This 207-nucleotide RNA was probed chemically with 2A3.
Source: RMDB library ARCHII, as collected in RNAgym.
For 2A3 the reverse transcriptase was SuperScript II with manganese.
The RNA was probed in 150 mM KOAc, 10 mM MgCl2 and 150 mM bicine (pH 8.5) at 24 C.
The 2A3 profile rests on 881 reads.
RNA sequence: GGGAACGACUCGAGUAGAGUCGAAAAUCUAAAGUACUUCGGUACUUUAGAAAAAGGAGCAACACUUGUGCGUGAAGUGGGUCAGGGGAGGAAUCCAGCAGCCCUAAGCGAUUUUCGGGUGUGUGCUCAAACAUGAUCGGGGUUCGCCCCGAUCAUGGAAUUCUUUCACGUUCGCGUGAAAGAAUUCAAAAGAAACAACAACAACAAC
Reactivity to 2A3 in 0.01 (KOAc 150mM, MgCl2 10mM, bicine 150mM(pH8.5), 24C), signal-to-noise 1, nucleotides 027 to 156: u010c000u000a000a000a000g000u000a000c000u040u140c300g020g000u000a010c000u000u040u000a000g000a050a050a000a020a000g130g000a010g000c010a000a020c000a010c000u010u010g000u060g030c040g040u120g050a100a150g140u150g040g000g020u150c020a040g000g030g030g000a010g060g090a080a060u010c000c000a000g000c000a000g000c030c000c000u000a020a020g000c000g010a060u160u060u100u140c020g000g050g000u000g000u050g050u030g000c000u000c030a020a060a000c000a000u000g000a000u000c000g010g000g030g020u060u060c140g120c000c000c000c010g000a000u000c000a000u000g010